Structure probing data (DMS and 2A3) for a 177-nucleotide construct. Source: RMDB library TTRDEL, as collected in RNAgym. 2A3 adducts were read by reverse transcription with SuperScript II with manganese. In probing experiments dimethyl sulfate is read out at A N1 and C N3, which are open when not base-paired. For DMS, 1,306 sequencing reads were counted. For 2A3, 2,805 sequencing reads were counted. Reactivities are given for positions 27 through 126.
RNA sequence: GGGAACGACUCGAGUAGAGUCGAAAAGAUAUGGACCUCGUAAGCGCGAAGAACUACAUCAGGUCGGAAACGACGCAGUGUAGGGAGCGUAUCGAGGUCCUAAGUCAAAGAUAGGUUCGCCUAUCAACCGUUUAAGUUUGUUCGCAAACUUAAACGGAAAAGAAACAACAACAACAAC
Reactivity to DMS in 0.01 (KOAc 150mM, MgCl2 10mM, bicine 150mM(pH8.5), 24C), signal-to-noise 2, nucleotides 027 to 126: g010a010u000a290u000g000g010a000c000c000u000c000g010u000a140a290g000c030g010c000g000a070a160g010a080a220c010u000a010c010a000u000c100a250g000g010u000c000g010g010a000a070a040c000g040a010c010g030c130a190g010u000g000u000a000g030g000g050a060g000c000g000u000a090u000c000g010a000g010g000u000c000c000u000a000a030g000u000c010a140a100a120g010a000u010a010g000g000u000u010c300g010c000c000u000a000u020c010a090a220
Reactivity to 2A3 in 0.01 (KOAc 150mM, MgCl2 10mM, bicine 150mM(pH8.5), 24C), signal-to-noise 2, nucleotides 027 to 126: g010a010u010a010u100g000g000a000c010c010u000c010g050u140a300a300g030c000g000c020g160a300a070g030a070a010c000u020a000c000a050u140c060a110g060g140u000c010g030g000a080a030a020c010g000a010c000g000c130a090g060u000g000u010a000g040g000g010a000g000c000g000u020a030u050c000g020a000g030g010u000c000c000u010a000a000g000u010c010a000a080a000g020a010u030a000g000g170u030u040c240g110c050c000u000a010u010c010a010a040